RNA sequence: GGGAACGACUCGAGUAGAGUCGAAAAUGAUAGAAGCCAGUUUUGUCAUUUUGAUGAAAUUUCAUCCUAUCCUUAGUUCCAAAACCGCUCCAAUGACUUCCUUUUUAUUGAUUUUUCCUUUUCUUUCCUUCACACACUUUUUCGAAAGUGUGUGAAGAAAAGAAACAACAACAACAAC
Reactivity to 2A3 in 0.01 (KOAc 150mM, MgCl2 10mM, bicine 150mM(pH8.5), 24C), signal-to-noise 8, nucleotides 027 to 126: u040g010a000u020a050g070a040a020g110c180c210a120g030u000u020u030u040g010u010c010a040u010u050u080u120g040a040u030g040a060a120a160u140u150u050c010a020u020c010c000u050a070u060c000c000u070u100a030g030u070u020c020c000a020a030a050a080c030c030g020c040u040c030c000a050a060u070g020a060c010u050u050c000c000u040u050u050u080u100a130u070u100g070a100u060u020u010u000u090c000c000u030u040u010u000c010u000u000u010c000
Chemical mapping of a 177-nucleotide RNA with 2A3.
Conditions: 150 mM KOAc, 10 mM MgCl2 and 150 mM bicine (pH 8.5), 24 C.
It was measured as part of the RMDB libraries RFM100 and RFMREP.